[RMDB]
Source: RMDB library M2PK50, as collected in RNAgym. An RNA of 177 nucleotides, treated with 2A3 and DMS and read out base by base. 2A3 adducts were read by reverse transcription with SuperScript II with manganese. The RNA was probed in 150 mM KOAc, 10 mM MgCl2 and 150 mM bicine (pH 8.5) at 24 C.

RNA sequence: GGGAACGACUCGAGUAGAGUCGAAAAGAAGGUGUGUUCGCACACCUUCAAAUAGGUCAGACAAAAGCUUCCUGGAGUCAUGACCUGAAAACCAAAGGAGCAAAACCACCUACUUCGGUAGGUGGAAUCUCUCUUUAAAGUUCGCUUUAAAGAGAGAAAAAGAAACAACAACAACAAC
Reactivity to 2A3 in 0.01 (KOAc 150mM, MgCl2 10mM, bicine 150mM(pH8.5), 24C), signal-to-noise 5, nucleotides 027 to 126: g000a000a000g020g000u010g000u010g000u030u110c160g060c040a000c000a000c000c000u000u000c000a000a000a000u090a000g010g000u010c000a010g000a020c040a080a110a020a010g000c030u200u110c030c010u060g070g040a080g020u020c050a260u020g000a000c000c000u000g010a080a110a000a010c010c000a020a020a100g040g000a020g010c040a020a010a050a100c000c000a000c000c000u010a000c010u040u090c250g090g000u000a000g000g000u000g000g000a000a000
Reactivity to DMS in 0.01 (KOAc 150mM, MgCl2 10mM, bicine 150mM(pH8.5), 24C), signal-to-noise 6, nucleotides 027 to 126: g000a020a010g010g010u000g020u010g010u000u020c200g040c010a010c000a000c000c000u000u000c000a010a050a100u010a040g000g000u000c000a030g000a020c020a110a120a140a080g010c060u010u010c030c020u000g000g010a300g010u000c010a080u010g010a020c000c000u010g000a050a030a090a190c020c020a030a080a080g000g000a040g000c040a130a030a070a190c000c000a010c000c000u000a000c000u000u010c150g010g010u000a000g000g020u000g000g000a020a010